[RMDB]
RNA sequence: GGGAACGACUCGAGUAGAGUCGAAAACAUCAAAUGCCUGAAAGUUUUGCAGGCGGGAGGGGCUAUUGUGGACCAGCCUGUGCCUGAAGUCGUCCGUGUGUCCGAAAUCCCUUUCUCAGCCCCAUUCCUGUUCUAUGAACUUCGGUUCAUAGAACAGAAAAGAAACAACAACAACAAC
Reactivity to 2A3 in 0.01 (KOAc 150mM, MgCl2 10mM, bicine 150mM(pH8.5), 24C), signal-to-noise 3, nucleotides 027 to 126: c020a060u200c040a000a080a110u110g000c000c000u040g050a170a190a200g090u090u110u240u300g050c000a010g000g000c000g000g010g000a060g010g000g010g000c020u100a080u160u180g090u140g070g030a030c020c000a020g050c010c010u070g040u100g050c010c000u070g030a080a010g040u060c030g010u000c030c020g040u040g000u000g010u050c020c010g010a000a040a120u090c010c000c010u010u130u010c000u000c010a040g010c000c010c000c000a020u100u060c000
Reactivity to DMS in 0.01 (KOAc 150mM, MgCl2 10mM, bicine 150mM(pH8.5), 24C), signal-to-noise 3, nucleotides 027 to 126: c090a140u020c130a060a070a060u020g020c020c010u010g000a070a090a150g010u000u010u000u010g010c060a040g000g020c020g010g010g020a100g010g000g000g010c090u000a100u010u000g010u020g020g010a070c020c020a110g000c040c020u000g020u000g000c040c030u000g010a100a080g000u000c050g000u000c030c030g000u010g000u010g000u010c020c030g000a050a070a120u010c040c000c010u000u000u000c020u000c070a100g000c030c000c010c040a220u000u000c080

This 177-nucleotide RNA was probed chemically with 2A3 and DMS. The 2A3 profile rests on 2,324 reads. The DMS profile rests on 3,632 reads. The RNA was probed in 150 mM KOAc, 10 mM MgCl2 and 150 mM bicine (pH 8.5) at 24 C.